[RMDB]
RNA sequence: GGGAACGACUCGAGUAGAGUCGAAAAGAUAUGGAAGGGUCGAAAGCGAAGAACUUAAAUAUGCCGAGGAUGAUCGGAAACGAUCAUUACAGCAUAUUUAAGGGAGCUUUGGACCCUUCCUAAGUCACAUGUGAAUCCUCUUCGGAGGAUUCACAUGAAAAGAAACAACAACAACAAC
Reactivity to DMS in 0.01 (KOAc 150mM, MgCl2 10mM, bicine 150mM(pH8.5), 24C), signal-to-noise 1, nucleotides 027 to 126: g010a020u000a300u000g000g000a010a000g030g000g010u000c000g000a000a000a000g000c000g000a130a230g000a140a240c020u000u000a000a010a000u000a000u000g020c020c000g030a300g010g010a020u000g000a000u000c020g040g010a070a090a140c000g000a000u000c000a020u000u000a000c020a000g010c000a000u000a000u000u000u000a020a020g040g000g010a120g010c000u000u000u010g000g000a000c000c000c000u000u000c000c000u000a010a030g000u000c020a210

An RNA of 177 nucleotides, treated with DMS and read out base by base.
For DMS the reverse transcriptase was MarathonRT.
In probing experiments dimethyl sulfate is read out at A N1 and C N3, which are open when not base-paired.
The data come from the RNA Mapping Database (RMDB), library TTRINS.